[RMDB]
RNA sequence: GGGAACGACUCGAGUAGAGUCGAAAAGAAGACCAAUUGUCUUUGACAAUUGUAUCCGCAUUACGACAGGUUGUGAGCGGACGCUCCUAGGGAGUGUCUGUUCCUCACAACCUUAGGCGGACUAUAAUGCGGACUCCUAGGGAGUCCUGGGAACGGAGGGGUAGCAGGUUUUCGAGCUUGUUACUCCAAAAGAAACAACAACAACAAC
Reactivity to DMS in 0.01 (KOAc 150mM, MgCl2 10mM, bicine 150mM(pH8.5), 24C), signal-to-noise 3, nucleotides 027 to 156: g000a080a040g000a110c070c020a050a080u000u000g020u000c000u000u010u010g010a100c050a050a080u010u020g000u000a050u000c000c000g100c010a300u000u000a050c030g010a140c110a050g000g000u000u010g030u010g010a080g020c030g000g010a020c000g010c000u000c010c010u000a150g060g050g020a080g050u010g010u000c010u000g000u000u010c040c010u000c000a020c020a010a030c000c010u010u000a010g010g020c050g010g000a100c090u000a100u000a020a030u010g000c020g030g010a040c040u000c000c000u000a060g010g000g000a000g000u010c010c000u000g010g010g010a090a250c090g000g020a300
Reactivity to 2A3 in 0.01 (KOAc 150mM, MgCl2 10mM, bicine 150mM(pH8.5), 24C), signal-to-noise 2, nucleotides 027 to 156: g050a050a020g060a030c000c040a010a010u020u010g000u010c070u120u170u210g010a000c000a010a010u000u000g030u020a010u040c000c000g000c010a040u040u030a040c040g040a010c010a030g000g000u000u000g010u000g000a000g020c020g000g010a000c000g000c000u000c010c030u250a140g080g160g000a000g000u010g000u010c000u000g000u060u060c020c000u000c000a000c000a010a000c000c000u000u000a000g000g000c000g030g000a000c000u050a060u040a030a020u050g020c000g000g000a010c010u000c000c000u030a050g010g030g060a010g070u050c000c000u000g000g000g000a070a020c020g060g010a020
This 207-nucleotide RNA was probed chemically with DMS and 2A3. Reactivities are rounded to 0.1 and cut off at 0 and 3. The data come from the RNA Mapping Database (RMDB), library OK3TST.